[RMDB]
RNA sequence: GGGAACGACUCGAGUAGAGUCGAAAAGAUCUGGCACGCAGUAUUACCACCGAUUAUGGACAGGAUUAUGCCCUGAUUGGUUCGCCAAAAAUUUAUGCUGCCAUUCAUCAGUGGGGCGGUACACCCGACCCUACGUAACAUUCGUGUUACGUAGGGUAAAAGAAACAACAACAACAAC
Reactivity to DMS in 0.01 (KOAc 150mM, MgCl2 10mM, bicine 150mM(pH8.5), 24C), signal-to-noise 9, nucleotides 027 to 126: g010a080u000c090u000g010g000c030a070c150g020c040a080g010u000a080u000u010a160c080c060a040c010c010g010a030u000u000a040u010g020g010a070c020a020g010g010a150u010u010a090u000g010c020c010c010u000g000a090u000u000g000g000u000u010c170g010c080c090a020a040a050a070a090u010u010u010a080u010g000c010u000g000c010c020a040u000u000c100a040u000c060a080g010u000g010g000g000g010c030g010g010u000a060c110a110c020c010c020g010
Reactivity to 2A3 in 0.01 (KOAc 150mM, MgCl2 10mM, bicine 150mM(pH8.5), 24C), signal-to-noise 9, nucleotides 027 to 126: g030a070u050c030u060g020g010c050a020c100g020c020a040g070u120a090u100u160a070c030c030a010c010c020g020a030u060u040a060u240g050g010a060c020a030g070g030a090u140u130a070u270g030c020c000c010u030g020a060u010u020g010g020u040u070c060g050c040c020a050a040a020a030a040u170u220u080a090u080g030c000u010g010c000c010a030u080u090c030a070u010c010a020g060u080g030g020g010g010c050g010g010u050a030c050a050c030c010c000g020